[RMDB]
RNA sequence: GGGAACGACUCGAGUAGAGUCGAAAACGUCGUGAACUAGCGACAAUGCAUUAGGUCCAUCGUUAUCUAACCGAAACAUCGUGACUAGUGUUAGAAUAGAACCAUGAGAGGGCGCUGGCAAACAAAGACGGAGUGUGGUAUUCGUAUUACGCUCCGUAAAAGAAACAACAACAACAAC
Reactivity to 2A3 in 0.01 (KOAc 150mM, MgCl2 10mM, bicine 150mM(pH8.5), 24C), signal-to-noise 9, nucleotides 027 to 126: c050g010u010c010g010u030g080a120a060c050u030a060g010c000g010a010c010a010a050u080g010c020a030u030u090a030g010g040u000c010c000a040u020c050g030u020u040a080u070c020u020a010a030c020c020g040a060a050a020c030a080u140c070g080u090g060a050c050u040a050g020u010g000u100u030a030g020a040a050u100a080g070a050a040c050c020a060u080g050a040g030a060g090g010g000c020g000c010u010g010g000c000a010a040a010c040a020a090a000g070
Reactivity to DMS in 0.01 (KOAc 150mM, MgCl2 10mM, bicine 150mM(pH8.5), 24C), signal-to-noise 9, nucleotides 027 to 126: c120g010u020c050g020u000g010a130a130c110u020a080g010c010g010a040c030a110a080u030g000c040a040u010u020a060g000g010u000c030c030a090u010c090g000u010u010a080u010c020u010a050a040c100c050g000a100a080a070c070a080u020c130g010u030g010a060c050u010a050g010u010g000u000u010a040g000a050a100u020a060g000a090a090c050c060a050u010g000a090g010a090g000g000g010c020g010c020u000g000g000c060a050a080a060c140a060a090a090g010